[RMDB]
RNA sequence: GGGAACGACUCGAGUAGAGUCGAAAAACACUUUGGGAGGCUGAGGCGGGCAGAUCACGAGGUCAGGGGUUCAAGACCAGCUUGACCAACAUGGUGAAACCCCAUCUCUAGGAUCACGAGGUCAGGAGUCCAAGACCAGCCUGACCAACAUGGUGAAUCAAUGAAAGAUUUUCGAAUCUUUCAUUGAAAAAGAAACAACAACAACAAC
Reactivity to 2A3 in 0.01 (KOAc 150mM, MgCl2 10mM, bicine 150mM(pH8.5), 24C), signal-to-noise 3, nucleotides 027 to 156: a020c040a020c030u090u030u070g020g000g000a050g020g010c050u020g020a030g040g010c060g020g010g010c010a020g000a020u010c010a010c080g010a010g000g020u030c120a110g000g020g000g010u030u040c100a100a000g050a070c020c000a020g090c050u120u150g070a110c040c040a060a070c090a130u120g010g000u010g020a090a020a020c010c010c000c010a060u020c020u010c030u100a100g120g050a020u030c000a010c040g050a060g010g050u040c020a010g020g080a020g020u000c060c060a160a030g020a020c010c010a020g060c010c000u020g040a090c000c000a010a020c030a030u100g030g010u050g020a010a040
Reactivity to DMS in 0.01 (KOAc 150mM, MgCl2 10mM, bicine 150mM(pH8.5), 24C), signal-to-noise 2, nucleotides 027 to 156: a080c030a050c040u000u010u000g020g000g010a070g010g010c040u020g010a090g020g000c040g040g020g060c020a140g030a040u020c020a100c150g000a150g030g010u000c020a060g020g000g050g010u010u010c030a040a070g000a060c000c020a090g000c040u000u020g020a230c100c020a040a060c030a040u000g040g000u000g010a060a030a080c000c010c020c020a100u000c020u000c020u030a130g010g020a080u000c020a040c060g010a300g000g030u000c010a050g020g010a200g020u000c020c060a080a220g000a090c050c000a090g000c000c010u000g000a060c010c000a020a040c150a080u000g010g000u000g000a110a240